[RMDB]
RNA sequence: GGGAACGACUCGAGUAGAGUCGAAAAAUCGCGCCUGGUCGGAACAUAACGACGGCGGGCCGGUGGGGAAUCAGGGGGCUACCGUGGGAUAGCGAUGAGACAGCCCCUCCCAUGGCACCAAGCGUCGCACACUGGCCAUACUUCGGUAUGGCCAGAACUCUGGUCUUAUAUUCGUAUAAGACCAGAGAAAAGAAACAACAACAACAAC
Reactivity to 2A3 in 0.01 (KOAc 150mM, MgCl2 10mM, bicine 150mM(pH8.5), 24C), signal-to-noise 1, nucleotides 027 to 156: a000u070c030g000c030g040c030c030u000g060g040u030c040g060g000a120a100c010a280u270a160a010c010g040a010c010g020g020c030g020g000g000c030c060g060g000u020g000g040g000g080a300a000u210c070a270g090g020g000g000g000c020u060a060c010c070g020u060g040g000g000a090u180a070g050c000g010a050u120g010a040g000a030c080a030g000c000c020c000c000u190c000c010c000a000u000g010g000c030a110c230c000a100a010g140c010g010u030c050g010c010a090c010a000c040u000g000g000c000c000a000u000a000c000u000u040c040g050g000u000a000u000g000g000c000c000a000g010a000a000
Structure probing data (2A3) for a 207-nucleotide construct.
It was measured as part of the RMDB library M2RFPK.
For 2A3, 571 sequencing reads were counted.
The RNA was probed in 150 mM KOAc, 10 mM MgCl2 and 150 mM bicine (pH 8.5) at 24 C.